RNA sequence: GGGAACGACUCGAGUAGAGUCGAAAAAAACUGACCUUUUCUGAGCAGUGGAUUGCACACUCACCCGAAAUAGAGUAGGACUCAAGCCUGCAUUUCAGCUGGAAAGUCUGUGUAGAGAGGUUACAAUCAGCAGAGCACUAGAGGAGGCAGUGUGGAAACGUAUAAAAUCCUUCGGGAUUUUAUACGUAAAAGAAACAACAACAACAAC
Reactivity to DMS in 0.01 (KOAc 150mM, MgCl2 10mM, bicine 150mM(pH8.5), 24C), signal-to-noise 1, nucleotides 027 to 156: a040a040a030c000u000g010a080c020c000u000u000u000u000c040u010g020a090g000c020a110g000u000g020g040a080u000u010g010c000a080c080a060c040u010c030a150c040c010c050g000a100a110a160u000a090g000a220g000u000a140g000g000a060c030u000c080a040a130g020c000c020u000g040c020a200u000u010u000c140a120g030c060u000g000g000a090a200a090g000u020c040u010g030u000g000u000a090g010a100g000a090g020g040u000u010a020c120a000a060u000c020a110g020c050a080g020a170g020c010a050c020u000a050g010a070g000g020a090g020g010c030a020g040u000g000u000g010g000a120a110
Reactivity to 2A3 in 0.01 (KOAc 150mM, MgCl2 10mM, bicine 150mM(pH8.5), 24C), signal-to-noise 2, nucleotides 027 to 156: a000a000a020c170u240g120a300c010c000u020u040u070u040c020u060g050a040g010c010a010g030u060g060g040a070u080u020g000c110a020c000a010c040u010c040a050c000c050c050g090a030a060a040u240a090g090a030g060u120a050g040g030a000c020u010c050a000a050g010c000c000u060g030c040a030u030u170u180c040a030g020c000u030g030g030a090a090a000g030u040c070u070g080u030g020u140a040g020a000g000a070g100g040u040u050a030c060a040a030u040c000a020g030c000a010g040a010g130c010a000c090u110a060g010a020g030g010a000g000g020c010a000g010u010g010u010g070g070a150a170
Structure probing data (DMS and 2A3) for a 207-nucleotide construct. Values cover nucleotides 27 to 156. The RNA was probed in 150 mM KOAc, 10 mM MgCl2 and 150 mM bicine (pH 8.5) at 24 C.